[RMDB]
RNA sequence: GGGAACGACUCGAGUAGAGUCGAAAACAUUUCACGCGGUAUGGUUACCACUGGUCAUUCUGCUGUUCCCAGUAUUAAGAAUGAGAGUGCUAUCAGUGUGAUAGAGGACAAGAAAAAGACGGUCGCCCUAUGUGGAAGAGUUCGCUCUUCCACAUAGAAAAGAAACAACAACAACAAC
Reactivity to 2A3 in 0.01 (KOAc 150mM, MgCl2 10mM, bicine 150mM(pH8.5), 24C), signal-to-noise 9, nucleotides 027 to 126: c030a030u090u110u060c020a020c020g030c020g000g020u110a060u160g060g040u080u150a070c040c000a010c020u020g060g130u030c000a020u020u000c010u030g030c010u030g040u080u070c020c030c000a000g000u030a090u220u170a100a030g010a020a010u040g010a010g010a010g050u040g050c010u020a020u070c060a100g050u020g020u030g120a020u020a030g090a040g020g030a020c050a070a140g100a100a140a040a010a000g070a030c020g030g000u030c010g020c010c000
Reactivity to DMS in 0.01 (KOAc 150mM, MgCl2 10mM, bicine 150mM(pH8.5), 24C), signal-to-noise 8, nucleotides 027 to 126: c100a120u010u010u010c020a060c050g020c030g000g000u020a030u030g010g010u020u030a100c300c000a020c030u000g000g010u010c010a010u010u000c010u000g000c130u050g010u000u010c010c010c000a260g010u030a080u020u020a100a040g010a030a030u000g000a040g000a050g010u000g000c030u000a030u000c020a110g030u000g010u010g010a010u000a030g010a110g010g000a050c110a060a070g010a050a080a090a090a080g000a090c090g010g010u010c010g010c030c050